[RMDB]
RNA sequence: GGGAACGACUCGAGUAGAGUCGAAAAUUCGUCUAGAGGUUUCAAUGUGUCUAUACAAAUUGAACACUGGGCGGUACACCGCUGCCAGUUGGAUGGUAACACUUAGGUAGGGGACACUCCUCUGGGACGCCUACUAUGACUUCGGUCAUAGUAGGCGAAAAGAAACAACAACAACAAC
Reactivity to 2A3 in 0.01 (KOAc 150mM, MgCl2 10mM, bicine 150mM(pH8.5), 24C), signal-to-noise 1, nucleotides 027 to 126: u030u010c010g000u010c000u020a020g000a070g080g000u070u230u280c090a080a060u120g020u000g010u000c060u040a110u030a100c000a020a230a090u060u080g060a080a010c010a000c040u030g030g020g040c000g000g000u040a010c070a060c050c010g010c030u040g170c020c000a020g010u040u030g110g000a100u040g040g080u040a180a060c070a020c060u070u120a090g190g050u000a010g020g300g000g020a000c030a000c030u000c020c010u000c010u030g000g010g060a020
Reactivity to DMS in 0.01 (KOAc 150mM, MgCl2 10mM, bicine 150mM(pH8.5), 24C), signal-to-noise 1, nucleotides 027 to 126: u000u000c060g020u000c010u000a010g010a060g010g030u030u000u000c190a050a080u000g020u000g010u010c140u010a140u010a070c010a050a100a080u010u000g000a110a110c010a040c010u000g000g020g010c000g020g020u010a090c300a120c030c040g000c020u040g000c010c030a010g020u010u000g030g000a020u010g030g000u010a120a100c090a100c140u000u010a140g040g030u010a010g000g010g010g020a070c020a020c000u000c000c010u020c020u010g010g000g040a050